Structure probing data (2A3 and DMS) for a 177-nucleotide construct. High 2A3 reactivity points to a flexible backbone, as in loops and unpaired stretches. For DMS, 54,768 sequencing reads were counted. For 2A3, 32,556 sequencing reads were counted.

RNA sequence: GGGAACGACUCGAGUAGAGUCGAAAACAUGUUACAGGUAACACAGAGGAUUCCCUUCCUAACGGGGGAUGACGAGGUUGAAGGCCAACCACGGCCUGUCAGAAGAUGGUGAUCACCGCGGGGCGCGGUGUGUUUAAGUGUUCGCACUUAAACACACAAAAGAAACAACAACAACAAC
Reactivity to 2A3 in 0.01 (KOAc 150mM, MgCl2 10mM, bicine 150mM(pH8.5), 24C), signal-to-noise 9, nucleotides 027 to 126: c030a050u100g030u080u110a060c060a070g060g070u070a080a010c040a000c010a070g070a060g110g030a040u030u050c010c000c000u030u080c050c020u090a120a060c070g020g000g010g000g010a010u040g030a020c030g030a040g040g060u040u070g070a070a030g040g000c020c010a030a010c090c040a050c070g000g000c000c000u000g050u020c010a030g030a110a020g050a080u100g010g050u040g030a060u080c030a020c060c010g020c020g010g020g030g010c080g000c050g030
Reactivity to DMS in 0.01 (KOAc 150mM, MgCl2 10mM, bicine 150mM(pH8.5), 24C), signal-to-noise 9, nucleotides 027 to 126: c120a100u000g010u000u000a070c090a100g010g010u000a040a050c060a060c110a090g010a140g010g010a220u000u000c010c000c000u000u000c030c040u010a090a130c210g000g000g000g000g010a060u000g010a140c070g010a070g010g010u000u000g010a190a050g010g010c030c010a060a090c130c100a100c130g000g010c000c000u000g000u000c060a070g010a060a060g010a090u000g010g010u000g000a080u000c070a060c030c020g010c050g010g010g000g020c110g010c070g010